[RMDB]
RNA sequence: GGGAACGACUCGAGUAGAGUCGAAAAGAUAUGGAAUGGAACUACAAGCGAACUCGCAUCGAUCUCGGAAACGAGGGAGCGAGGGAGCUUGCCAUUCCUAAGUCAAACCAGGGCUUCGGCCCUGGAAGUACGACAAUCAGUUCGCUGAUUGUCGUACAAAAGAAACAACAACAACAAC
Reactivity to 2A3 in 0.01 (KOAc 150mM, MgCl2 10mM, bicine 150mM(pH8.5), 24C), signal-to-noise 2, nucleotides 027 to 126: g010a020u100a040u150g000g000a000a000u010g000g030a080a040c120u190a060c300a000a010g010c000g010a040a020c010u010c000g020c020a220u300c090g090a130u040c020u000c010g030g030a100a060a040c010g000a000g000g010g000a010g000c000g000a000g000g000g020a010g020c010u010u020g010c010c000a010u000u000c000c000u010a120a010g030u060c020a030a070a000c000c000a010g000g000g000c020u130u160c300g120g000c030c000c000u000g000g000a000a000
Reactivity to DMS in 0.01 (KOAc 150mM, MgCl2 10mM, bicine 150mM(pH8.5), 24C), signal-to-noise 2, nucleotides 027 to 126: g010a070u000a300u010g000g000a010a000u000g010g000a040a030c020u010a300c010a000a000g000c000g000a300a300c000u040c000g000c000a300u000c160g010a070u030c000u010c000g000g000a080a100a220c000g000a010g050g000g010a010g020c000g010a020g000g000g000a300g010c000u000u000g070c000c010a000u000u000c000c000u000a020a070g000u000c010a050a190a220c000c000a000g010g000g060c010u000u020c210g010g000c000c000c010u010g000g000a000a090